Chemical mapping of a 207-nucleotide RNA with 2A3 and DMS. The reactions ran in a buffer of 150 mM KOAc, 10 mM MgCl2 and 150 mM bicine (pH 8.5), at 24 C. For DMS the reverse transcriptase was MarathonRT. Reactivities are given for positions 27 through 156. For 2A3, 1,735 sequencing reads were counted. In probing experiments dimethyl sulfate is read out at A N1 and C N3, which are open when not base-paired. 2A3 adducts were read by reverse transcription with SuperScript II with manganese.
RNA sequence: GGGAACGACUCGAGUAGAGUCGAAAAAUUGAUGCGAUGGCUCGUGCCAUGGAUAGAUACCGGAUGACAGGUGUUUUUGCGAUUGAGGAGGUGACUCGCUAUACCGAAGAGCAACAACGCAAGAUUAAAGCUGCUGAGUGGAAGGUUCAUCAAGCGCUAUACCCCUAUUGUUCGCAAUAGGGGUAUAAAAAGAAACAACAACAACAAC
Reactivity to 2A3 in 0.01 (KOAc 150mM, MgCl2 10mM, bicine 150mM(pH8.5), 24C), signal-to-noise 3, nucleotides 027 to 156: a020u100u100g030a020u080g000c060g040a040u040g050g000c010u070c140g100u160g050c010c020a050u070g030g000a040u040a110g090a020u100a080c010c030g020g040a040u060g010a050c070a050g040g040u030g050u030u060u040u090u220g030c040g030a040u030u120g070a040g000g040a030g060g000u060g040a050c010u020c030g040c040u060a020u060a120c020c040g070a080a020g010a020g050c040a050a060c000a020a000c030g040c050a050a020g010a030u110u140a130a010a020g030c020u070g000c010u020g040a010g030u020g010g080a070a040g030g000u030u000c010a020u010c000a100a000g020c000g000c070
Reactivity to DMS in 0.01 (KOAc 150mM, MgCl2 10mM, bicine 150mM(pH8.5), 24C), signal-to-noise 4, nucleotides 027 to 156: a120u000u010g000a110u010g010c030g000a120u000g010g020c000u020c160g020u000g020c000c050a060u000g030g020a130u000a100g010a110u010a050c030c020g010g010a100u010g010a080c050a070g020g040u010g010u000u000u000u000u000g020c060g010a180u000u000g010a130g000g010a100g020g010u000g010a090c040u000c040g030c060u010a120u000a160c050c040g000a070a080g010a120g020c030a040a080c030a040a060c040g020c050a090a120g000a170u000u000a060a070a140g030c020u000g020c010u000g000a090g010u010g000g010a100a060g010g000u000u000c050a060u000c070a050a130g010c060g010c120